An RNA of 177 nucleotides, treated with 2A3 and DMS and read out base by base. Conditions: 150 mM KOAc, 10 mM MgCl2 and 150 mM bicine (pH 8.5), 24 C. Values are in units of 0.01, from 0 to 300, in steps of 10. DMS adducts were read by reverse transcription with MarathonRT.
[RMDB]
RNA sequence: GGGAACGACUCGAGUAGAGUCGAAAACGAGUCACGGUAUAGCCAGCCAAAGAUUCACCGGGAGGCACCCGGCACUGCAGCAUACUGAUAACAAAUAUAGCGUGUCCCAAAGGCUCACUUCGGUGAGACUCAAAUUCGGAUUCGUCCGAAUUUGAGUAAAAGAAACAACAACAACAAC
Reactivity to 2A3 in 0.01 (KOAc 150mM, MgCl2 10mM, bicine 150mM(pH8.5), 24C), signal-to-noise 9, nucleotides 027 to 126: c040g020a020g060u080c040a010c060g010g000u050a030u050a060g030c020c020a020g010c020c020a100a120a030g070a050u120u100c040a020c030c000g010g010g010a130g040g080c060a090c020c020c000g010g000c020a020c040u070g000c010a020g000c010a020u050a090c030u050g080a110u070a170a090c080a080a120a020u230a030u080a090g070c020g030u030g060u040c010c000c000a050a090a020g070g000c000u000c000a010c000u020u050c090g090g000u000g000a010g020
Reactivity to DMS in 0.01 (KOAc 150mM, MgCl2 10mM, bicine 150mM(pH8.5), 24C), signal-to-noise 8, nucleotides 027 to 126: c060g000a100g000u010c040a090c120g010g010u000a030u010a120g010c040c030a110g010c050c100a140a130a080g000a100u020u020c120a160c020c030g010g000g000a150g000g010c150a120c020c020c020g000g000c080a030c070u000g010c060a060g000c040a040u010a040c050u000g000a100u020a070a080c130a080a080a080u010a080u030a090g000c030g010u000g000u000c000c000c000a070a090a100g010g010c010u000c000a010c000u010u040c110g020g020u000g000a010g000